[RMDB]
RNA sequence: GGGAACGACUCGAGUAGAGUCGAAAAGAUAUGGAUUCUGUACGGACAACAGCUCGGAAACGAGACAUGUCUCGUACACGGAAUCCUAAGUCAAACGCCAUACUGCGGUUCGCCGCAGUAUGGCGAACUAACAAACAGCGUUCGCGCUGUUUGUUAGAAAAGAAACAACAACAACAAC
Reactivity to DMS in 0.01 (KOAc 150mM, MgCl2 10mM, bicine 150mM(pH8.5), 24C), signal-to-noise 2, nucleotides 027 to 126: g010a050u000a300u000g000g000a020u000u000c000u000g020u000a000c010g010g000a020c000a040a060c290a190g000c000u000c000g020g000a100a080a210c010g000a000g000a020c120a160u010g000u000c000u010c010g010u010a000c040a030c300g010g010a000a000u000c000c000u000a020a120g020u010c040a060a110a170c010g010c000c000a010u030a020c010u000g010c000g000g000u000u000c270g030c030c000g010c010a000g010u010a000u000g000g000c020g000a000a040
Reactivity to 2A3 in 0.01 (KOAc 150mM, MgCl2 10mM, bicine 150mM(pH8.5), 24C), signal-to-noise 1, nucleotides 027 to 126: g010a010u080a090u170g010g010a010u010u000c000u030g000u030a010c010g000g030a000c000a120a050c070a120g060c000u000c000g030g030a130a060a070c020g010a010g030a040c050a120u090g010u010c080u090c290g000u000a010c010a010c070g010g040a010a000u020c030c000u030a130a000g080u000c040a140a120a000c030g000c000c000a000u000a010c000u010g050c000g000g120u040u080c300g020c060c030g000c000a000g000u000a000u000g010g000c000g000a000a000
The data come from the RNA Mapping Database (RMDB), library TTRDEL.
Chemical mapping of a 177-nucleotide RNA with DMS and 2A3.
Conditions: 150 mM KOAc, 10 mM MgCl2 and 150 mM bicine (pH 8.5), 24 C.
The DMS profile rests on 1,831 reads.